The record gives the reactivity of an RNA of 177 nucleotides to 2A3 and DMS.
For DMS, 1,505 sequencing reads were counted.
It was measured as part of the RMDB library M2PK90.
For DMS the reverse transcriptase was MarathonRT.

[RMDB]
RNA sequence: GGGAACGACUCGAGUAGAGUCGAAAAGACAAAUGCAGCAUAUUAGGCUAAGCAGGAAAGCGACGGUAGCUCCUGGUGUCAGUUCAUACGGUGUGAUGCAUCUGCGUCGUGCACACAUGCACCCAAAUGUACCAAGGCUAUUCGUAGCCUUGGUACAAAAAGAAACAACAACAACAAC
Reactivity to 2A3 in 0.01 (KOAc 150mM, MgCl2 10mM, bicine 150mM(pH8.5), 24C), signal-to-noise 2, nucleotides 027 to 126: g050a020c030a050a080a000u080g000c000a010g000c020a000u080a100u130u090a090g100g000c010u020a030a040g080c030a010g000g060a100a150a010g030c010g090a090c050g020g100u070a030g020c000u000c000c010u030g090g060u010g010u000c060a050g050u110u140c030a030u120a200c100g020g000u010g010u020g040a180u010g010c000a020u020c020u120g070c030g100u130c040g000u050g010c000a000c000a000c020a060u060g000c010a050c000c000c000a020a110a040
Reactivity to DMS in 0.01 (KOAc 150mM, MgCl2 10mM, bicine 150mM(pH8.5), 24C), signal-to-noise 2, nucleotides 027 to 126: g000a150c060a050a070a040u000g020c020a050g000c040a000u000a160u020u020a040g000g010c040u010a130a120g000c020a030g010g000a050a100a080g000c030g020a080c100g000g030u000a080g010c020u000c030c030u000g000g000u010g020u000c060a050g000u000u000c050a060u000a100c100g010g000u020g020u000g000a070u010g020c020a040u000c060u000g020c070g020u000c100g010u000g010c010a030c080a050c090a060u020g000c070a080c000c010c040a030a090a140